RNA sequence: GGGAACGACUCGAGUAGAGUCGAAAAGUUUUUACGAAAUGCAGGAUGCCAUCAAGGCUGCCAGCGAACAGUUGCCGAUGGAAAACGGUGCUGUGGACUUUGCCGCACUGGUUGAAGGUGGUGCGCGCAUGAACGUCGCAAAUCCUGACGACAGCUGGGAGACGGAUUAAUUCGUUAAUCCGUCUCCAAAAGAAACAACAACAACAAC
Reactivity to 2A3 in 0.01 (KOAc 150mM, MgCl2 10mM, bicine 150mM(pH8.5), 24C), signal-to-noise 3, nucleotides 027 to 156: g050u080u030u040u140u140a100c090g030a050a020a000u150g010c030a020g030g010a030u060g050c030c000a020u050c080a100a110g060g000c020u030g020c000c000a010g030c020g040a080a010c000a000g040u220u150g140c020c000g010a050u150g130g100a090a130a000a000c030g000g010u020g020c010u030g000u040g010g010a040c020u090u060u110g040c020c040g000c020a040c050u050g070g110u200u150g060a080a050g080g080u100g010g000u020g010c020g000c030g000c020a000u090g090a120a020c070g020u030c000g020c030a000a000a150u000c000c000u080g030a050c000g010a020c020a010g010c020u080g000
Reactivity to DMS in 0.01 (KOAc 150mM, MgCl2 10mM, bicine 150mM(pH8.5), 24C), signal-to-noise 1, nucleotides 027 to 156: g000u000u010u010u000u010a120c070g040a070a040a090u010g020c040a180g000g030a110u000g000c000c070a040u000c030a130a300g040g030c050u000g040c000c080a230g000c030g000a120a110c020a010g000u000u040g060c030c110g000a120u010g070g030a120a080a110a270c060g040g020u010g020c010u000g040u000g020g000a090c130u000u010u000g020c020c000g000c000a060c000u000g030g020u010u010g000a120a240g030g000u010g000g020u000g090c070g020c050g040c040a040u000g000a060a060c020g000u000c000g050c010a030a080a200u000c030c010u000g010a130c000g000a030c050a040g040c070u000g010